[RMDB]
RNA sequence: GGGAACGACUCGAGUAGAGUCGAAAAAAGCACAACCAGUAGAAGUACCUGUUGAAGAUAUUGCGCAGGUUGUCAUAGCUGACACCUUACAGGAAACUCCUGUUGUGCCUGAUACUGUUGAAGUCCCAUGACAUAACCUUCGGGUUAUGUAAAAGAAACAACAACAACAAC
Reactivity to 2A3 in 0.01 (KOAc 150mM, MgCl2 10mM, bicine 150mM(pH8.5), 24C), signal-to-noise 9, nucleotides 027 to 129: a000a000g010c000a000c000a000a010c070c080a020g020u060a030g080a290a020g020u060a060c000c000u010g030u070u100g130a120a050g070a140u190a170u270u300g100c170g000c080a010g010g000u060u150g010u010c020a030u130a130g120c170u060g020a000c000a010c000c000u010u040a010c010a000g000g000a100a150a040c010u010c000c000u010g000u000u000g000u000g000c000c000u030g020a040u050a180c060u080g050u120u060g040a050a010g040u000c010c000c000a020u040g030
Reactivity to DMS in 0.01 (KOAc 150mM, MgCl2 10mM, bicine 150mM(pH8.5), 24C), signal-to-noise 9, nucleotides 027 to 129: a110a080g020c020a030c020a000a000c120c120a020g000u040a080g040a090a010g040u000a110c000c000u020g030u010u020g040a090a060g010a170u040a090u050u050g010c160g010c170a000g000g000u010u040g040u000c020a020u030a080g000c280u030g000a000c030a000c000c000u020u000a000c000a000g010g010a090a070a080c040u010c010c010u000g000u050u010g000u010g000c030c050u000g020a100u020a050c100u010g030u000u000g000a080a090g030u020c000c000c000a130u020g020